[RMDB]
RNA sequence: GGGAACGACUCGAGUAGAGUCGAAAAGAUAUGGAUCCAUGCCUCUCGAUAAGCUCCGUGUCGGAAACGACACCGAGCUUUUGACGAGAUGCAUGGAUCCUAAGUCAAACUGGGGUUCGCCCCAGAACGCCAAUUGUUACUUCGGUAACAAUUGGCGAAAAGAAACAACAACAACAAC
Reactivity to DMS in 0.01 (KOAc 150mM, MgCl2 10mM, bicine 150mM(pH8.5), 24C), signal-to-noise 1, nucleotides 027 to 126: g000a030u000a300u010g000g010a020u000c000c000a020u000g000c000c070u010c050u000c000g030a110u000a020a000g000c020u000c000c300g010u010g020u040c000g000g000a050a160a090c000g010a000c000a000c000c270g010a020g020c000u000u000u000u000g000a220c180g000a010g000a030u010g020c000a000u000g010g000a000u000c000c000u020a020a040g000u000c060a090a080a200c000u000g000g000g020g080u000u000c300g010c000c000c000c000a020g000a060a080
Notes
An RNA of 177 nucleotides, treated with DMS and read out base by base. The reactions ran in a buffer of 150 mM KOAc, 10 mM MgCl2 and 150 mM bicine (pH 8.5), at 24 C. DMS adducts were read by reverse transcription with MarathonRT. For DMS, 868 sequencing reads were counted.